The data come from the RNA Mapping Database (RMDB), library OK3TST. This 207-nucleotide RNA was probed chemically with DMS and 2A3. 2A3 adducts were read by reverse transcription with SuperScript II with manganese.
[RMDB]
RNA sequence: GGGAACGACUCGAGUAGAGUCGAAAAGAACAGGUGUGUUCCUAUGUUUUUAACUAGAUGCCUUGUUUGCGGGUUCUUCUUUGUGGUGCUCUAGUUUUACUUUUUUAGCUAACAUCAUGUAGCACAGGAUAAGUUGGACAUGAGAAAUACAACAGUAAAUUGCGCAGUAUUUCGAUACUGCGCAAUUAAAAGAAACAACAACAACAAC
Reactivity to DMS in 0.01 (KOAc 150mM, MgCl2 10mM, bicine 150mM(pH8.5), 24C), signal-to-noise 2, nucleotides 027 to 156: g000a110a060c030a110g030g040u000g030u000g000u000u000c010c030u010a100u000g000u000u010u000u000u010a060a050c050u000a120g020a200u000g030c010c040u030u000g000u000u000u000g020c050g010g040g030u000u000c020u000u010c050u000u000u010g060u000g010g000u000g050c030u000c010u020a120g030u010u000u000u000a100c110u010u000u010u000u010u000a090g020c010u010a030a090c030a060u000c060a060u000g000u000a060g000c030a120c130a110g000g020a070u000a030a120g020u000u010g000g020a050c060a050u000g000a100g020a030a060a100u000a050c070a080a110c050a090g010u000a050
Reactivity to 2A3 in 0.01 (KOAc 150mM, MgCl2 10mM, bicine 150mM(pH8.5), 24C), signal-to-noise 1, nucleotides 027 to 156: g010a060a000c050a000g000g070u010g030u040g040u030u070c000c010u080a070u090g040u040u170u000u070u140a050a080c010u000a060g040a010u100g040c000c000u000u040g070u040u010u030g100c070g010g010g040u000u170c020u070u030c030u100u060u100g090u070g020g000u000g050c090u050c000u040a080g000u000u040u110u060a020c060u120u140u180u030u130u080a060g030c040u040a030a170c030a100u170c010a030u110g040u100a030g010c040a000c000a060g050g040a040u000a080a080g060u050u090g050g060a020c090a100u100g010a040g060a040a100a030u220a020c060a060a000c000a020g050u170a010
The DMS profile rests on 3,029 reads.